Overview: This 177-nucleotide RNA was probed chemically with DMS and 2A3. DMS adducts were read by reverse transcription with MarathonRT. Source: RMDB library RFM100, as collected in RNAgym.
[RMDB]
RNA sequence: GGGAACGACUCGAGUAGAGUCGAAAAUUAGCCCCGUAACUUCGGAAGAAGGGGUGCCUGCAGCGAUGCAGGCCGCAGAGAAAUGGCCCAACCGACUGUUUAUCAAAAACACAGCACUCUGCAAAGACUUCAAAGCUCCUUUCGAGGAGCUUUGAAGAAAAGAAACAACAACAACAAC
Reactivity to DMS in 0.01 (KOAc 150mM, MgCl2 10mM, bicine 150mM(pH8.5), 24C), signal-to-noise 1, nucleotides 027 to 126: u070u000a150g020c050c010c000c000g000u020a060a110c130u000u030c070g000g030a150a050g000a100a070g000g000g000g000u010g070c000c000u010g030c000a000g020c300g020a160u000g000c000a000g000g000c000c140g040c000a000g030a060g000a040a080a090u150g000g000c000c000c100a180a190c140c000g060a080c100u020g000u030u000u000a090u160c300a060a040a030a050a050c050a070c090a180g060c260a100c010u000c000u000g000c000a050a060a000g000a180
Reactivity to 2A3 in 0.01 (KOAc 150mM, MgCl2 10mM, bicine 150mM(pH8.5), 24C), signal-to-noise 2, nucleotides 027 to 126: u090u020a050g010c000c050c000c030g060u060a040a000c040u040u050c060g100g060a080a000g020a040a000g030g010g010g050u090g000c000c000u000g000c000a020g020c010g100a040u000g000c000a000g000g000c000c010g000c000a010g010a000g020a030a130a030u200g070g030c040c010c000a000a030c020c020g060a100c040u010g100u030u030u040a220u110c080a080a110a110a130a000c030a030c010a040g000c000a010c020u000c000u020g000c000a070a000a000g110a080

The RNA was probed in 150 mM KOAc, 10 mM MgCl2 and 150 mM bicine (pH 8.5) at 24 C. The DMS profile rests on 1,039 reads. The 2A3 profile rests on 972 reads.